Notes
Chemical mapping of a 207-nucleotide RNA with DMS and 2A3. The reactions ran in a buffer of 150 mM KOAc, 10 mM MgCl2 and 150 mM bicine (pH 8.5), at 24 C. The 2A3 profile rests on 2,795 reads. Reactivities are given for positions 27 through 156.

RNA sequence: GGGAACGACUCGAGUAGAGUCGAAAAAAGAAAUCAAAAAAGAUUUUUGAGACAAACACGCUUCACAAUGUGCGGCAAAGAAACAUUGUUUAUGCAAAGGCACUUCGCAAUGUGUGCUCAAACAUUGACUACCGUCCACCGUUCGCGGUGGACGGAACAUAGUCUAGAAGUUCGCUUCUAGACUAUGAAAAGAAACAACAACAACAAC
Reactivity to DMS in 0.01 (KOAc 150mM, MgCl2 10mM, bicine 150mM(pH8.5), 24C), signal-to-noise 1, nucleotides 027 to 156: a120a150g000a150a090a100u010c020a000a070a090a150a150a110g020a100u000u000u000u000u000g010a160g000a160c070a110a210a180c080a050c040g030c050u000u030c000a040c000a020a050u040g000u000g030c090g020g010c010a100a090a060g050a040a010a020c010a010u000u000g000u000u010u000a050u020g000c010a010a130a080g010g020c000a020c000u000u010c120g050c100a100a090u000g000u000g000u000g000c060u000c000a010a160a040c000a030u000u000g000a100c060u000a090c000c000g060u000c000c000a020c000c000g000u000u010c300g110c100g000g000u000g000g000a000c110g000g000a030a030
Reactivity to 2A3 in 0.01 (KOAc 150mM, MgCl2 10mM, bicine 150mM(pH8.5), 24C), signal-to-noise 4, nucleotides 027 to 156: a000a000g090a050a060a000u100c080a110a070a090a100a060a030g040a070u090u080u030u050u150g080a100g030a050c060a030a160a000c060a040c050g000c000u010u000c020a010c000a010a030u000g000u000g010c010g020g040c060a090a090a090g110a030a050a000c000a000u010u000g050u030u080u060a050u070g020c030a010a060a110g080g000c010a010c020u080u090c120g020c110a080a060u080g010u000g000u010g030c040u070c130a050a080a020c030a010u030u070g040a060c040u060a080c040c000g010u000c000c010a000c000c000g020u060u060c260g010c030g100g000u000g000g000a000c000g000g000a000a000